[RMDB]
RNA sequence: GGGAACGACUCGAGUAGAGUCGAAAAAGUAUGGGUAAAGAAUAUGUAGUCAUCGGUCUAGGUCGUUUUGGAGGUAGUAUCGUUCGUGAGUUGAAUGCAUUAGACAUGGAUGUAAUGGCCAUCGACCCACGUGACGUCUUUUCGAAGACGUCACGUGAAAAGAAACAACAACAACAAC
Reactivity to DMS in 0.01 (KOAc 150mM, MgCl2 10mM, bicine 150mM(pH8.5), 24C), signal-to-noise 2, nucleotides 027 to 126: a100g020u000a050u020g010g010g000u020a070a060a070g010a090a080u000a040u000g040u000a040g020u000c060a060u000c040g000g010u000c040u000a100g020g010u000c020g030u000u010u000u000g020g000a120g010g020u000a050g000u010a060u010c050g010u000u010c020g050u010g020a100g020u000u000g000a090a130u000g020c100a050u020u000a080g010a060c100a080u020g020g010a060u000g000u000a060a060u000g010g000c030c010a040u000c040g010a090c030c050
Reactivity to 2A3 in 0.01 (KOAc 150mM, MgCl2 10mM, bicine 150mM(pH8.5), 24C), signal-to-noise 1, nucleotides 027 to 126: a010g110u110a030u090g000g020g000u050a030a000a160g100a130a100u130a070u190g030u080a040g020u020c020a010u030c040g040g010u000c050u060a060g020g060u020c050g100u050u030u060u130g130g000a050g030g000u030a020g000u040a130u140c020g010u000u000c030g010u040g110a100g050u030u010g090a150a110u120g000c040a050u060u060a080g040a060c020a020u050g010g000a020u010g020u110a120a060u030g070g000c070c000a010u050c020g000a080c010c010

Record summary
The record gives the reactivity of an RNA of 177 nucleotides to DMS and 2A3. For 2A3, 1,056 sequencing reads were counted. For DMS the reverse transcriptase was MarathonRT. 2A3 adducts were read by reverse transcription with SuperScript II with manganese.